[RMDB]
RNA sequence: GGGAACGACUCGAGUAGAGUCGAAAAUGAGUGAUGAAUCAAGCGUCAGACCUGCCAGAUAGAUCGGGACGAAAAUCACGGUGAGAAUAGCAUUUGUCACCGGUCCGGCAAGUGCAAUUAAUCCAUGUUGUCGUGAUGUAACACGCCCCUGAUGAUGCUCACCUAUAGUGUUCGCACUAUAGGUGAGAAAAGAAACAACAACAACAAC
Reactivity to 2A3 in 0.01 (KOAc 150mM, MgCl2 10mM, bicine 150mM(pH8.5), 24C), signal-to-noise 2, nucleotides 027 to 156: u130g030a020g070u030g030a040u070g030a060a120u120c060a080a020g080c000g040u000c030a060g070a140c020c000u030g030c030c010a040g040a210u130a010g080a030u090c010g020g000g030a030c030g020a110a010a000a000u050c010a020c050g040g010u030g030a120g030a070a110u070a050g030c020a010u030u020u020g030u000c010a020c220c020g020g010u030c000c020g020g000c000a000a000g000u010g030c040a010a020u120u080a080a020u030c120c060a040u160g040u140u010g040u120c050g020u050g000a070u030g030u100a100a040c000a030c100g010c000c030c000c020u000g040a040u030g000a010u100g030
Reactivity to DMS in 0.01 (KOAc 150mM, MgCl2 10mM, bicine 150mM(pH8.5), 24C), signal-to-noise 2, nucleotides 027 to 156: u000g010a120g050u010g020a100u010g000a090a090u010c070a080a140g000c030g030u000c020a070g010a070c010c040u000g030c060c100a160g030a130u000a090g020a110u000c010g030g000g000a040c030g020a030a130a140a060u000c000a020c010g000g030u010g000a170g010a120a120u000a130g010c020a300u010u000u010g030u000c010a050c030c030g030g010u000c080c120g030g000c000a010a030g020u000g020c000a070a070u000u010a080a140u000c030c050a180u000g000u000u030g000u000c000g000u000g010a080u030g000u000a020a090c070a110c060g020c000c000c010c040u000g010a120u000g040a150u010g000
The record gives the reactivity of an RNA of 207 nucleotides to 2A3 and DMS. For 2A3, 1,202 sequencing reads were counted. Values cover nucleotides 27 to 156. The RNA was probed in 150 mM KOAc, 10 mM MgCl2 and 150 mM bicine (pH 8.5) at 24 C. High 2A3 reactivity points to a flexible backbone, as in loops and unpaired stretches.